[RMDB]
RNA sequence: GGGAACGACUCGAGUAGAGUCGAAAAGCUGUACAACUCCCAUCGUCUGGCACCCGGCACACCCGCCGCUUGCCAACUCUCCCCCCGCGCAUACCUGGCUGCAGCGACUGACCCUUUCCUCCAGGGCUAUCUCUAUUGACUUCGGUCAAUAGAGAUAAAAAGAAACAACAACAACAAC
Reactivity to DMS in 0.01 (KOAc 150mM, MgCl2 10mM, bicine 150mM(pH8.5), 24C), signal-to-noise 5, nucleotides 027 to 126: g010c050u010g010u030a070c090a090a110c100u000c020c010c020a110u000c090g000u020c090u010g010g010c060a030c040c060c000g000g000c040a100c150a090c100c090c070g000c030c030g000c060u000u000g000c040c010a040a100c060u010c040u000c010c020c030c010c020c030g030c080g000c070a060u020a040c060c020u010g000g000c080u000g000c020a080g010c040g010a060c070u010g000a130c010c000c020u000u010u000c020c000u000c040c040a050g010g000g000c120
Reactivity to 2A3 in 0.01 (KOAc 150mM, MgCl2 10mM, bicine 150mM(pH8.5), 24C), signal-to-noise 5, nucleotides 027 to 126: g030c030u040g040u130a050c040a090a080c110u030c000c010c010a040u060c050g070u030c050u030g020g000c000a020c010c010c010g020g000c020a030c010a050c070c030c020g030c010c000g010c010u020u030g010c010c010a040a070c030u040c020u030c040c000c000c000c000c010g010c010g000c030a030u070a100c000c010u010g040g000c010u030g010c020a020g020c020g040a030c030u050g020a050c000c010c000u010u050u020c000c000u010c010c010a010g010g000g030c000